RNA sequence: GGGAACGACUCGAGUAGAGUCGAAAAGCUAACUAAGUCUAACCUUAGUAGGAAGUAAGGUAGGCGUGUGAACUUCCGAAAGGCAUGUGAUUGUGAAGGGCCGGAUCUAAUUUAGUACAUGGGAAAAGGAAGAUUACAGGUUCGCCUGUAAUCUUCCAAAAGAAACAACAACAACAAC
Reactivity to 2A3 in 0.01 (KOAc 150mM, MgCl2 10mM, bicine 150mM(pH8.5), 24C), signal-to-noise 3, nucleotides 027 to 126: g050c010u050a000a040c000u060a130a000g030u000c010u010a110a170c020c000u030u000a000g020u000a000g150g060a060a070g040u120a020a030g040g050u050a060g000g050c010g060u090g060u020g040a050a010c030u020u000c020c000g030a050a000a000g030g070c080a020u140g090u080g090a150u070u160g020u090g100a040a030g000g000g010c040c010g030g020a010u000c030u040a080a180u030u020u100a100g020u050a020c020a090u180g000g020g110a010a080a030a090
Reactivity to DMS in 0.01 (KOAc 150mM, MgCl2 10mM, bicine 150mM(pH8.5), 24C), signal-to-noise 2, nucleotides 027 to 126: g000c070u000a070a070c060u000a030a060g020u000c100u020a090a150c180c000u000u000a000g000u040a110g020g040a080a090g000u000a090a070g010g020u020a050g010g050c030g010u040g000u000g010a090a110c030u010u000c000c010g000a140a110a110g000g000c040a000u010g000u000g010a070u040u020g020u020g000a080a140g000g000g030c020c000g000g000a010u020c070u000a050a080u010u020u020a060g000u010a060c080a100u000g020g030g020a080a060a140a060